[RMDB]
RNA sequence: GGGAACGACUCGAGUAGAGUCGAAAACUUCUGAACAACAACUUGGUAGAGUAACCCUACCUGGUUAUGGUUAUGAAGGAAUUAGAAUGAGUGAUUGGUUGAGGUGAGCAUUGGGUUACUAUACUAGACAUUUCUUACCGUUCGCGGUAAGAAAUGUAAAAGAAACAACAACAACAAC
Reactivity to DMS in 0.01 (KOAc 150mM, MgCl2 10mM, bicine 150mM(pH8.5), 24C), signal-to-noise 3, nucleotides 027 to 126: c050u000u000c020u000g010a070a010c030a070a040c070a050a050c030u000u010g010g000u000a010g000a100g000u000a060a050c090c050c000u000a060c040c000u000g000g000u000u000a070u000g010g000u000u000a090u010g000a030a020g000g010a100a090u000u020a090g020a090a050u000g000a090g020u010g000a070u000u000g010g020u000u000g010a070g000g020u000g010a050g000c080a080u000u010g020g000g020u000u000a030c030u010a080u000a060c090u000a070g000
Reactivity to 2A3 in 0.01 (KOAc 150mM, MgCl2 10mM, bicine 150mM(pH8.5), 24C), signal-to-noise 1, nucleotides 027 to 126: c010u030u000c000u140g070a040a020c010a020a010c050a030a000c020u030u080g030g000u000a020g020a040g020u060a010a010c000c000c020u020a010c020c000u000g050g000u040u000a080u120g100g040u080u060a040u190g040a030a040g040g090a050a060u190u060a080g090a210a040u140g030a030g140u080g030a080u110u060g050g040u050u110g030a030g010g020u020g000a040g040c090a080u040u090g000g020g010u020u010a020c020u040a040u000a040c000u030a080g050